[RMDB]
RNA sequence: GGGAACGACUCGAGUAGAGUCGAAAAAUGGUACUCAGAGUAUUAAAAACAACAGUACUCUCAGAGCAUUCAUUGAUUUAUGUGUUGUGUACAUACUGUGUUCCAGGCACCAUGGAUAUGAAGGUGUACAAGAUAAAUUCUCUGUCUUCAUAGGGUACUGAUCCACUGGAUUCGUCCAGUGGAUCAGAAAAGAAACAACAACAACAAC
Reactivity to 2A3 in 0.01 (KOAc 150mM, MgCl2 10mM, bicine 150mM(pH8.5), 24C), signal-to-noise 1, nucleotides 027 to 156: a000u070g000g000u050a030c000u010c000a010g000a020g070u010a010u060u130a080a160a110a130a090c110a030a040c030a010g000u040a010c000u020c000u000c040a020g000a010g000c010a020u050u060c040a020u210u060g060a080u100u180u170a110u090g050u000g020u070u020g090u010g010u000a050c010a020u090a130c000u030g010u000g010u100u000c050c050a140g060g000c050a100c080c010a100u050g040g000a030u020a010u110g110a250a000g000g000u010g010u000a020c020a000a010g010a020u070a050a140a100u160u020c030u000c060u010g060u000c080u050u030c040a020u110a000g000g020g050u060a020